Conditions: 150 mM KOAc, 10 mM MgCl2 and 150 mM bicine (pH 8.5), 24 C. This 177-nucleotide RNA was probed chemically with 2A3 and DMS.

[RMDB]
RNA sequence: GGGAACGACUCGAGUAGAGUCGAAAAUGGCUCCUACCGUGAUAAGGACUUCGGUGUCGGGGUCUACAUCCAUGUCGUAGUAGUCGCGUUGGUGUCGUGCAACUGCUUCGCGUAGUAUUGGAAAUCCAUCAGCUUUCUGAUUCGUCAGAAAGCUGAUAAAAGAAACAACAACAACAAC
Reactivity to 2A3 in 0.01 (KOAc 150mM, MgCl2 10mM, bicine 150mM(pH8.5), 24C), signal-to-noise 2, nucleotides 027 to 126: u090g010g000c000u010c010c000u010a010c010c010g040u000g050a080u090a300a090g100g040a110c050u090u050c100g120g000u110g200u300c030g020g010g010g000u020c060u020a030c040a060u000c080c010a030u040g080u110c010g020u000a010g010u000a000g000u040c030g030c020g040u040u040g100g060u030g020u100c020g000u000g000c020a030a010c010u010g000c000u070u050c040g000c010g100u080a050g060u010a080u030u170g050g040a090a100a020u040c040c000
Reactivity to DMS in 0.01 (KOAc 150mM, MgCl2 10mM, bicine 150mM(pH8.5), 24C), signal-to-noise 2, nucleotides 027 to 126: u000g020g000c020u000c030c010u010a030c020c030g030u010g000a060u020a080a260g020g020a110c090u010u000c000g050g000u010g010u010c120g000g000g000g020u000c020u000a080c300a080u000c030c060a050u010g010u010c050g010u010a020g000u000a020g010u000c010g010c060g010u020u010g010g010u000g000u010c010g030u010g010c060a060a060c020u000g010c040u010u000c050g000c070g000u000a090g010u010a100u000u000g010g010a080a110a100u000c040c060